RNA sequence: GGGAACGACUCGAGUAGAGUCGAAAAGAACUGUUUCGACAGUUCAUAAAUGCGUACUACGAAGAGGUAUGGCUAGGUCAUCGUCCCAAAUAGGACGAGACCUUGGACCCAUACUCCCCACCUUCGUAUCGCCUGAAACCCAACUUCGGUUGGGUAAUGAGUUUGUAAUGUUCGCAUUACAAACUCAAAAAGAAACAACAACAACAAC
Reactivity to 2A3 in 0.01 (KOAc 150mM, MgCl2 10mM, bicine 150mM(pH8.5), 24C), signal-to-noise 4, nucleotides 027 to 156: g010a020a000c010u020g050u070u260u230c190g090a020c000a010g000u000u030c000a020u160a040a210a010u160g010c040g000u060a080c040u010a010c010g000a010a000g010a010g040g010u010a000u020g030g000c010u010a010g010g000u030c110a300u010c300g000u110c000c030c090a100a260a190u260a080g010g000a000c010g000a000g000a000c000c000u000u080g010g050a020c000c020c000a000u010a000c010u090c040c010c020c010a020c010c010u010u010c000g000u000a030u300c000g010c000c010u030g060a130a050a050c020c020c010a000a000c000u040u040c160g100g000u010u000g000g000g020u020a010a030
Reactivity to DMS in 0.01 (KOAc 150mM, MgCl2 10mM, bicine 150mM(pH8.5), 24C), signal-to-noise 3, nucleotides 027 to 156: g010a010a010c010u000g020u000u000u010c280g020a080c000a020g000u000u020c020a090u000a050a110a050u010g030c010g020u000a050c080u000a010c010g010a040a040g000a300g020g000u000a000u010g010g000c050u010a010g030g000u000c010a140u000c020g070u000c020c000c020a050a190a210u000a060g000g020a030c000g010a080g000a000c000c000u000u040g030g000a090c300c000c050a040u010a040c020u000c260c070c000c020a300c150c020u000u000c000g020u000a020u010c000g000c010c070u000g000a100a150a090c010c010c000a010a020c000u000u000c300g020g000u000u000g000g000g000u000a010a030